[RMDB]
RNA sequence: GGGAACGACUCGAGUAGAGUCGAAAACGCUGGGUACCACUCUCCCUACAGGGAGCGUCCUGAAGCGCGCACGGGACGCGAAGAACUGUAUUGGGAGAUGUACCUGUGCUGAAGCGCGCACGGCAACCGAAAGGUGCGAAAGGGGGGUUCGCCCCCCGGGUAUUAACAACUUCGGUUGUUAAUACCCAAAAGAAACAACAACAACAAC
Reactivity to 2A3 in 0.01 (KOAc 150mM, MgCl2 10mM, bicine 150mM(pH8.5), 24C), signal-to-noise 1, nucleotides 027 to 156: c010g000c020u010g000g010g000u000a000c000c010a080c100u010c000u000c000c010c020u010a010c000a010g000g010g010a020g000c000g000u000c010c000u030g020a150a040g000c000g000c000g000c020a010c000g000g030g010a010c000g000c010g060a120a010g010a010a000c000u000g020u020a020u220u300g020g020g000a010g000a000u030g000u000a000c000c010u000g020u010g010c000u020g000a120a010g000c000g000c000g000c020a010c010g000g040c030a030a000c010c000g070a140a060a010g020g020u040g040c040g070a160a090a210g000g000g000g000g010g020u050u020c100g120c000c000c000c000c000c000

Chemical mapping of a 207-nucleotide RNA with 2A3. The RNA was probed in 150 mM KOAc, 10 mM MgCl2 and 150 mM bicine (pH 8.5) at 24 C. High 2A3 reactivity points to a flexible backbone, as in loops and unpaired stretches. Source: RMDB library RNAMAK, as collected in RNAgym.